[RMDB]
RNA sequence: GGGAACGACUCGAGUAGAGUCGAAAAACUUUAAAUCUAAGAAAUCUAACAUUUUAUUAAUUACUGUUCCUUUUCUAAUCCAGACAGUUUUUGCAUUCCAUAUUCCAUUGUUUAAAUGGUAAAAAUAAAAUAUCGUGGGAUUCGUCCCACGAUAUUUAAAAGAAACAACAACAACAAC
Reactivity to 2A3 in 0.01 (KOAc 150mM, MgCl2 10mM, bicine 150mM(pH8.5), 24C), signal-to-noise 1, nucleotides 027 to 126: a000c040u060u230u250a070a220a100u020c020u080a150a000g120a050a150a050u010c040u270a300a030c020a000u000u090u280u300a040u150u300a150a160u080u140a040c020u020g010u140u070c000c000u040u000u030u000c020u030a170a100u120c060c000a000g040a060c020a000g000u060u020u000u000u000g040c060a060u000u070c000c000a000u000a100u210u070c000c000a000u040u010g250u100u300u140a100a130a000u000g000g000u020a120a000a000a000a000u140a000
The record gives the reactivity of an RNA of 177 nucleotides to 2A3. High 2A3 reactivity points to a flexible backbone, as in loops and unpaired stretches. Values are in units of 0.01, from 0 to 300, in steps of 10. For 2A3 the reverse transcriptase was SuperScript II with manganese. Conditions: 150 mM KOAc, 10 mM MgCl2 and 150 mM bicine (pH 8.5), 24 C.